This 177-nucleotide RNA was probed chemically with 2A3 and DMS.
The data come from the RNA Mapping Database (RMDB), library 15KREP.
Conditions: 150 mM KOAc, 10 mM MgCl2 and 150 mM bicine (pH 8.5), 24 C.

[RMDB]
RNA sequence: GGGAACGACUCGAGUAGAGUCGAAAAUGUCAACGAUGUUGUCCUCGCAAUUCUCUCUGGAACCACAACUAAUGUUGACAAAAUACGCCAGCUUCUCAAAGGUGUCACCCUUGACAAGUUGCGUGAUUACCAUAUUUCUGUUCGCAGAAAUAUGGUAAAAAGAAACAACAACAACAAC
Reactivity to 2A3 in 0.01 (KOAc 150mM, MgCl2 10mM, bicine 150mM(pH8.5), 24C), signal-to-noise 4, nucleotides 027 to 126: u050g000u010c000a010a000c020g030a050u110g000u020u010g020u010c020c020u040c060g060c070a070a180u230u020c060u000c010u000c050u110g020g020a040a030c040c010a010c020a010a030c010u060a090a070u180g000u000u010g010a000c010a000a030a000a010u100a000c000g030c060c020a010g000c000u010u000c000u000c010a080a070a020g030g000u070g130u130c070a070c010c000c000u000u000g000a000c000a020a000g010u020u010g010c000g010u020g010a020u030
Reactivity to DMS in 0.01 (KOAc 150mM, MgCl2 10mM, bicine 150mM(pH8.5), 24C), signal-to-noise 5, nucleotides 027 to 126: u010g000u000c020a000a020c020g020a300u000g000u000u000g010u000c070c030u000c100g030c150a100a120u000u010c070u000c080u000c100u010g010g010a130a070c120c110a050c030a010a030c020u010a120a130u010g000u000u000g000a040c020a040a060a040a090u000a030c020g010c110c070a010g000c010u000u000c250u000c000a020a030a040g000g010u000g000u010c260a090c060c000c020u000u000g000a030c060a040a000g020u000u000g020c060g000u000g010a190u000